[RMDB]
RNA sequence: GGGAACGACUCGAGUAGAGUCGAAAAAUCAGAGGGGGCUAUCAUGCAAACUAGGAUUGUCUGCUCAUGCACAGAACCAACUACCGAUAACUAACAGUGCAUGAAGGUUAGUUAUUCCAUAUUAAUUAAAACUCGUAAUUCUUCGGAAUUACGAGAAGUUAAAAAUGAUCUUCGGAUCAUUUUUAACAAAAGAAACAACAACAACAAC
Reactivity to DMS in 0.01 (KOAc 150mM, MgCl2 10mM, bicine 150mM(pH8.5), 24C), signal-to-noise 2, nucleotides 027 to 156: a120u000c030a060g000a150g020g020g020g000g000c010u000a030u010c040a070u000g020c040a070a090a110c070u000a080g050g030a140u000u000g010u000c040u000g010c000u000c050a070u000g040c070a090c020a120g020a100a160c080c050a050a070c090u010a210c090c050g010a070u000a020a060c070u000a030a040c020a110g000u000g000c030a030u000g010a040a100g010g010u000u000a040g000u000u000a040u010u000c040c010a150u010a140u000u000a050a150u010u000a050a060a100a170c000u000c000g010u000a010a000u000u010c010u000u000c300g040g010a020a000u000u000a010c000g000a000g020a010a030
Reactivity to 2A3 in 0.01 (KOAc 150mM, MgCl2 10mM, bicine 150mM(pH8.5), 24C), signal-to-noise 4, nucleotides 027 to 156: a000u090c040a030g040a090g040g040g030g000g000c010u020a040u110c030a030u090g030c030a040a050a070c040u050a030g040g020a080u050u050g030u030c030u040g010c010u010c020a030u020g000c010a030c010a010g060a110a040c060c030a060a070c040u150a130c040c090g050a020u010a020a000c000u000a000a000c010a020g030u030g050c010a000u010g010a020a010g060g000u000u000a000g000u000u020a010u070u050c010c000a060u080a080u250u250a140a100u120u110a050a130a030a050c000u000c000g000u000a000a000u000u000c000u010u000c070g090g000a000a000u000u000a000c000g000a000g000a000a010

Chemical mapping of a 207-nucleotide RNA with DMS and 2A3. Values cover nucleotides 27 to 156. The RNA was probed in 150 mM KOAc, 10 mM MgCl2 and 150 mM bicine (pH 8.5) at 24 C. For 2A3 the reverse transcriptase was SuperScript II with manganese. Reactivities are rounded to 0.1 and cut off at 0 and 3. As a SHAPE reagent, 2A3 marks flexible, mostly unpaired nucleotides at the ribose 2'-OH.